Source: RMDB library M2PK50, as collected in RNAgym. Structure probing data (2A3 and DMS) for a 177-nucleotide construct.

RNA sequence: GGGAACGACUCGAGUAGAGUCGAAAAGGGAAAAAGUUCGCUUUUUCCCAAAUAAAAUCAGCGGUUAAAAAGCUGCGCUUAUAACCGCUGAAGCGGAGCUUAAAAGUGAGGUGUUCGCACCUCACAACAAUGAGCACAAGUUCGCUUGUGCUCAUUGAAAAGAAACAACAACAACAAC
Reactivity to 2A3 in 0.01 (KOAc 150mM, MgCl2 10mM, bicine 150mM(pH8.5), 24C), signal-to-noise 2, nucleotides 027 to 126: g000g000g020a020a010a010a010a010g020u070u130c140g060c060u000u020u030u000u000c000c000c000a000a010a000u010a000a000a000a090u020c010a000g000c000g020g040u010u030a020a180a050a020a030g000c020u150g080c170g000c110u020u010a010u020a050a000c000c020g010c000u000g000a000a000g020c020g070g120a060g030c030u180u190a070a070a030a080g010u010g010a000g010g000u000g010u010u070c200g010c070a000c010c000u000c000a000c000a000a000
Reactivity to DMS in 0.01 (KOAc 150mM, MgCl2 10mM, bicine 150mM(pH8.5), 24C), signal-to-noise 3, nucleotides 027 to 126: g000g000g000a000a010a010a010a020g020u000u040c230g020c000u000u000u000u000u000c000c000c010a040a040a030u010a050a060a080a120u010c010a000g000c010g010g010u000u000a000a050a140a040a030g000c000u010g040c250g010c010u010u010a290u000a020a010c000c010g000c000u000g010a020a040g000c090g010g000a080g010c130u000u000a030a090a090a100g010u000g010a000g010g020u000g010u000u000c180g010c010a020c010c000u000c000a010c010a070a090

Reactivities are given for positions 27 through 126. For DMS the reverse transcriptase was MarathonRT.